The record gives the reactivity of an RNA of 177 nucleotides to DMS. For DMS, 2,330 sequencing reads were counted.
RNA sequence: GGGAACGACUCGAGUAGAGUCGAAAAGCUGCUGGACAGGCUGGAGGAAGAAAUCCGGGCAGACCGCGUGAGCAGUGAAAGCCGGGCGUGGCUUGCGCAGUGCGGGCUGACGGUGGAGCAACUGGCACAUCCACCAUGACUUCGGUCAUGGUGGAUGAAAAGAAACAACAACAACAAC
Reactivity to DMS in 0.01 (KOAc 150mM, MgCl2 10mM, bicine 150mM(pH8.5), 24C), signal-to-noise 2, nucleotides 027 to 126: g010c050u000g040c000u010g000g000a080c100a110g030g000c040u000g000g020a080g010g000a080a070g010a080a110a100u010c010c010g000g000g000c020a030g010a080c010c010g010c010g020u000g010a070g020c010a080g000u010g010a090a090a050g020c000c010g020g000g020c210g010u010g010g020c020u010u000g000c000g020c080a120g010u000g010c000g010g000g000c000u000g010a050c060g000g000u000g000g020a080g010c030a080a070c070u020g020g010c050a250

Conditions: 150 mM KOAc, 10 mM MgCl2 and 150 mM bicine (pH 8.5), 24 C.